[RMDB]
RNA sequence: GGGAACGACUCGAGUAGAGUCGAAAAUUCCAUUUGAGUAUCCUGAAAACGGGCUUUUCAGCAUGGAACGUACAUAUUAAAUAGUAGGAGUGCAUAGUGGCCCGUAUAGCAGGCAAUAACAUUCCUGAAAACGUGAAAAGGUUCGCCUUUUCACGAACAUCAUAUAUAGCUUCGGCUAUAUAUGAUGAAAAGAAACAACAACAACAAC
Reactivity to 2A3 in 0.01 (KOAc 150mM, MgCl2 10mM, bicine 150mM(pH8.5), 24C), signal-to-noise 6, nucleotides 027 to 156: u040u000c010c010a030u120u060u050g080a080g020u070a120u300c000c010u010g020a060a040a000a010c020g000g020g000c020u100u090u100u160c060a010g000c010a010u040g050g040a200a020c050g070u060a010c020a050u140a060u160u300a160a180a140u150a080g020u020a010g010g120a090g000u010g000c030a040u070a200g140u060g030g000c000c000c000g000u000a000u010a010g000c000a000g000g010c000a000a010u020a030a000c030a040u050u100c000c010u040g050a110a090a060a060c010g000u000g000a010a000a010a000g030g010u020u060c130g130c000c010u000u000u000u010c000a000c000g000a010a000
Reactivity to DMS in 0.01 (KOAc 150mM, MgCl2 10mM, bicine 150mM(pH8.5), 24C), signal-to-noise 3, nucleotides 027 to 156: u000u000c000c010a110u000u000u000g010a120g050u010a120u000c020c020u000g010a060a100a150a070c070g030g010g010c030u000u000u010u000c010a180g000c020a040u000g000g020a060a090c060g020u010a180c090a150u000a170u000u020a100a090a290u010a130g020u000a060g000g010a140g020u000g020c010a100u000a120g010u000g020g010c000c010c020g030u000a020u000a110g030c020a030g010g020c070a060a090u010a090a080c060a180u000u000c000c020u000g000a100a070a100a230c040g050u000g000a000a000a030a020g000g000u010u000c300g050c020c000u000u000u000u000c000a000c010g000a030a090

Conditions: 150 mM KOAc, 10 mM MgCl2 and 150 mM bicine (pH 8.5), 24 C. Structure probing data (2A3 and DMS) for a 207-nucleotide construct. For DMS, 4,828 sequencing reads were counted. For DMS the reverse transcriptase was MarathonRT. Values cover nucleotides 27 to 156. As a SHAPE reagent, 2A3 marks flexible, mostly unpaired nucleotides at the ribose 2'-OH.